[RMDB]
RNA sequence: GGGAACGACUCGAGUAGAGUCGAAAAGAUAUGGAGAGACGGGAGCUGUACUCGGAAACGAGUAUACAGCUUUGAUCGUCCUCCUAAGUCAAACGUAGCCAGUCCAGUUCGCUGGACUGGCUACGAAGAAUCGAAUAGCGUUCGCGCUAUUCGAUUCAAAAGAAACAACAACAACAAC
Reactivity to DMS in 0.01 (KOAc 150mM, MgCl2 10mM, bicine 150mM(pH8.5), 24C), signal-to-noise 1, nucleotides 027 to 126: g020a040u000a300u020g000g000a000g000a230g020a030c010g000g000g000a010g000c010u000g030u000a030c000u000c000g000g000a060a070a180c020g010a000g010u000a080u010a020c000a010g010c000u000u000u010g000a070u000c000g000u000c000c010u000c000c000u000a010a050g000u000c040a120a100a270c000g010u000a010g030c010c010a000g030u000c000c010a000g000u000u000c270g000c010u010g000g010a000c000u000g010g000c000u000a000c010g030a010a040
Chemical mapping of a 177-nucleotide RNA with DMS. For DMS, 1,110 sequencing reads were counted. Source: RMDB library TTRDEL, as collected in RNAgym. The reactions ran in a buffer of 150 mM KOAc, 10 mM MgCl2 and 150 mM bicine (pH 8.5), at 24 C.